Annotation: This 177-nucleotide RNA was probed chemically with 2A3 and DMS. The data come from the RNA Mapping Database (RMDB), library OK1LIB. For 2A3 the reverse transcriptase was SuperScript II with manganese.
[RMDB]
RNA sequence: GGGAACGACUCGAGUAGAGUCGAAAAUCUUCUGGCACGUUUCCAGAAACAACGCGUAGGGAUGGUGCUGUCUCACUGCGCGUGACCUCUUAUUGGUCGCAUGUUGUCUCACGAAAUGGCUGACGAGUGCAUGAGUAUAGUUCGCUAUACUCAUGCAAAAAGAAACAACAACAACAAC
Reactivity to 2A3 in 0.01 (KOAc 150mM, MgCl2 10mM, bicine 150mM(pH8.5), 24C), signal-to-noise 8, nucleotides 027 to 126: u020c020u100u010c000u010g030g000c070a030c300g040u050u080u010c010c020a030g030a020a020a000c040a030a000c020g010c010g040u030a040g030g020g040a050u080g070g200u170g100c110u130g030u020c010u000c040a110c020u020g000c010g000c010g000u000g000a010c010c000u050c070u160u230a160u170u180g020g000u020c010g000c070a070u110g020u060u040g060u040c010u010c020a060c030g030a060a020a050u070g050g000c030u020g020a070c060g030a060g110
Reactivity to DMS in 0.01 (KOAc 150mM, MgCl2 10mM, bicine 150mM(pH8.5), 24C), signal-to-noise 5, nucleotides 027 to 126: u020c060u010u010c020u010g000g000c060a180c080g010u010u020u010c010c060a100g020a060a060a100c140a050a040c030g000c010g010u000a000g010g010g000a030u010g000g010u010g000c060u020g000u000c020u000c020a100c040u000g010c010g000c020g000u000g000a060c040c020u000c300u040u030a100u030u010g000g010u010c010g030c090a050u010g020u030u000g010u000c020u010c030a110c160g000a050a070a040u010g000g000c020u000g000a060c040g000a080g020
Annotation: 2A3 is a SHAPE reagent: it acylates the 2'-hydroxyl of flexible nucleotides of all four kinds.